[RMDB]
RNA sequence: GGGAACGACUCGAGUAGAGUCGAAAAGAUCUGUUGCAGUGUCGUCUGGCAGGUGACAGGUUGAAGCCCUGGGCUGUGUGUGGAAGUACUUGCACGAUGAGUACGCUGCACCAGAUGAUCAGGCAUGCGGUGAAUCAACGUUCGCGUUGGUUUACCGAAAAGAAACAACAACAACAAC
Reactivity to 2A3 in 0.01 (KOAc 150mM, MgCl2 10mM, bicine 150mM(pH8.5), 24C), signal-to-noise 9, nucleotides 027 to 126: g020a010u000c000u000g000u000u010g000c030a140g090u000g010u030c080g110u120c160u300g010g000c000a010g010g010u010g010a010c000a000g010g010u020u040g040a030a010g020c000c000c000u010g000g020g000c010u010g030u020g000u000g000u020g080g020a160a110g010u000a000c000u000u010g020c070a050c180g140a210u100g000a000g010u010a000c000g000c010u000g000c000a000c000c000a000g000a040u070g020a060u060c000a000g000g020c010a020u090g020
Reactivity to DMS in 0.01 (KOAc 150mM, MgCl2 10mM, bicine 150mM(pH8.5), 24C), signal-to-noise 9, nucleotides 027 to 126: g000a020u000c000u000g000u000u000g000c010a040g010u010g030u000c000g020u040c170u060g010g010c000a030g000g010u000g000a030c000a010g000g010u000u000g010a060a070g010c130c000c000u000g010g010g010c000u000g000u050g010u000g010u000g000g010a050a110g020u000a010c000u000u000g000c080a170c230g010a130u020g000a040g000u010a020c010g000c000u000g000c000a010c010c000a010g000a050u020g010a090u020c020a020g000g010c040a140u030g010